[RMDB]
RNA sequence: GGGAACGACUCGAGUAGAGUCGAAAACGCGGAUACUUCGGUAUCCGCGAAAGAAGCGAAGGCGUACCGAAAUAAAACGGUAAUAAAUCGCAUAACGCCUAAAAAGCCUAGACUUCGGUCUAGGCAAUCAACGAAAUAUCUUCGGAUAUUUCGUUGAAAAAGAAACAACAACAACAAC
Reactivity to 2A3 in 0.01 (KOAc 150mM, MgCl2 10mM, bicine 150mM(pH8.5), 24C), signal-to-noise 3, nucleotides 027 to 126: c010g000c000g010g000a010u010a000c010u020u060c110g050g010u010a000u000c010c000g000c000g010a000a000a000g020a100a020g000c010g050a050a010g030g000c030g010u010a010c000c010g110a130a070a050u300a030a110a020a010c000g000g050u010a010a010u050a030a160a050u300c010g000c010a010u070a090a000c020g020c020c010u080a110a100a030a010a000g000c000c000u000a000g000a000c000u030u060c270g060g000u000c000u000a000g000g010c000a010a000
Reactivity to DMS in 0.01 (KOAc 150mM, MgCl2 10mM, bicine 150mM(pH8.5), 24C), signal-to-noise 3, nucleotides 027 to 126: c010g030c010g010g000a020u000a000c000u010u010c170g040g010u000a000u000c000c000g000c000g010a010a020a070g000a190a160g000c010g020a070a020g010g020c080g030u000a050c000c000g000a060a070a140u000a070a130a100a120c010g010g000u000a020a040u010a060a090a130u000c000g010c020a080u000a070a110c030g020c010c010u010a030a060a090a090a110g000c000c000u000a000g000a010c000u000u020c180g000g010u000c010u000a010g000g020c000a000a000
Chemical mapping of a 177-nucleotide RNA with 2A3 and DMS. 2A3 adducts were read by reverse transcription with SuperScript II with manganese.